[RMDB]
RNA sequence: GGGAACGACUCGAGUAGAGUCGAAAACAUCUAUGGGAAGCCAGUGCAGGGGGUGGCAUAUGUGCGCUUUGGGCUCCUAGAUGAGGAUGGUAAGAAGACUUUCUUUCGGGGGCUGGAGAGUCAGACCAACGGCAGAAAUAUUCGUAUUUCUGCCGUUAAAAGAAACAACAACAACAAC
Reactivity to DMS in 0.01 (KOAc 150mM, MgCl2 10mM, bicine 150mM(pH8.5), 24C), signal-to-noise 2, nucleotides 027 to 126: c050a060u010c040u000a060u010g020g010g000a090a100g010c040c020a030g020u000g030c040a070g000g000g010g020g060u000g000g000c080a070u020a060u000g030u000g000c030g000c030u000u000u000g010g020g020c020u010c010c020u010a050g000a060u000g010a090g030g020a090u000g000g010u000a040a110g000a100a120g000a040c070u000u000u000c010u000u000u010c100g000g000g000g020g010c170u000g010g000a050g020a030g000u010c030a080g010a120c100c060